[RMDB]
RNA sequence: GGGAACGACUCGAGUAGAGUCGAAAAGAUAUGGAAAUUUUGGCUAACCUGGUAGGGCGAUAAGCUGAUGUCGGAAACGACAUUCAGCUUUUGACGCCUGUUCAGGUUAGCCAAAAUUUCCUAAGUCGUAUGUACUGUACUUCGGUACAGUACAUACAAAAGAAACAACAACAACAAC
Reactivity to DMS in 0.01 (KOAc 150mM, MgCl2 10mM, bicine 150mM(pH8.5), 24C), signal-to-noise 2, nucleotides 027 to 126: g000a100u000a300u000g000g000a000a010a020u010u000u000u000g010g000c000u000a010a020c000c000u010g000g000u010a300g000g010g020c010g010a120u000a020a010g010c000u000g020a030u000g000u000c000g000g000a140a110a200c020g020a030c000a000u000u010c000a030g010c000u000u000u000u000g020a180c080g030c000c000u000g000u000u000c000a020g000g000u000u000a010g010c000c010a000a000a000a000u000u000u000c010c000u010a030a090g010u010c130